Description:
This 177-nucleotide RNA was probed chemically with DMS and 2A3. For 2A3 the reverse transcriptase was SuperScript II with manganese. DMS adducts were read by reverse transcription with MarathonRT. Conditions: 150 mM KOAc, 10 mM MgCl2 and 150 mM bicine (pH 8.5), 24 C.
[RMDB]
RNA sequence: GGGAACGACUCGAGUAGAGUCGAAAAAAUUUCACACCUGGAUGUGCUCACUCAACCAAGAAUAUAGAGAAAGAGCUUCUGCCCUGAGACUCAGAAAAAUAUUCUCCUGUGCUUUGGUUCAGUAUAGUUGAACUACUAUGUUCGCAUAGUAGUUCAAAAAAGAAACAACAACAACAAC
Reactivity to DMS in 0.01 (KOAc 150mM, MgCl2 10mM, bicine 150mM(pH8.5), 24C), signal-to-noise 6, nucleotides 027 to 126: a060a070u020u010u010c020a090c050a050c040c030u020g000g010a070u020g020u010g010c050u010c040a090c030u010c080a070a070c080c070a060a060g000a080a050u020a070u010a070g000a070g010a070a070a090g010a080g000c060u010u010c050u000g010c060c040c020u000g010a060g010a070c020u010c040a070g010a020a050a040a060a060u010a070u010u000c010u010c030c040u010g010u010g000c040u010u010u010g010g010u000u010c110a060g020u000a060u010a070g010
Reactivity to 2A3 in 0.01 (KOAc 150mM, MgCl2 10mM, bicine 150mM(pH8.5), 24C), signal-to-noise 5, nucleotides 027 to 126: a000a010u130u150u070c060a060c010a010c030c040u070g090g000a110u050g070u050g070c000u020c010a040c010u040c020a010a060c020c010a050a020g100a130a010u210a060u090a080g060a010g090a080a100a010g030a020g010c000u040u010c010u030g000c020c010c000u040g020a040g010a070c030u030c030a010g160a060a080a040a020a010u110a070u060u030c010u000c010c010u050g030u050g060c010u050u070u060g070g000u020u030c020a030g010u030a110u140a140g120